[RMDB]
RNA sequence: GGGAACGACUCGAGUAGAGUCGAAAACUGACCUUUUUUACUUUAAGAAUCCAUGAGAAGAAAGUUUGAGUCAGGGAUUAUUUUGUAGAUGCUCCUAUUUUGUAGAUGAGGGACUAGAGAUACGAAGCGUGACAACGAUAUUCGUAUCGUUGUCACGAAAAGAAACAACAACAACAAC
Reactivity to DMS in 0.01 (KOAc 150mM, MgCl2 10mM, bicine 150mM(pH8.5), 24C), signal-to-noise 2, nucleotides 027 to 126: c020u000g000a070c050c010u000u000u000u000u000u000a070c010u000u010u000a060a180g000a140a050u000c080c060a070u000g010a110g010a070a080g000a050a050a070g010u010u000u000g010a140g010u000c010a010g030g020g000a140u010u010a060u010u000u000u010g010u010a080g010a080u000g010c040u000c030c010u000a020u000u000u000u010g010u010a050g000a070u000g010a040g030g010g010a090c040u000a050g000a100g000a110u000a040c090g030a070a090g000
Reactivity to 2A3 in 0.01 (KOAc 150mM, MgCl2 10mM, bicine 150mM(pH8.5), 24C), signal-to-noise 1, nucleotides 027 to 126: c020u030g020a040c030c000u160u040u000u020u070u030a090c040u050u050u030a190a070g110a080a100u000c070c040a080u140g020a010g020a120a010g030a120a020a030g060u150u170u210g100a020g000u000c020a040g010g030g030a010u080u010a050u050u180u100u120g110u010a020g040a110u130g000c040u020c000c020u020a110u100u170u130u140g100u040a030g020a090u020g060a070g000g000g010a040c000u030a030g020a000g000a060u010a130c030g070a040a010g000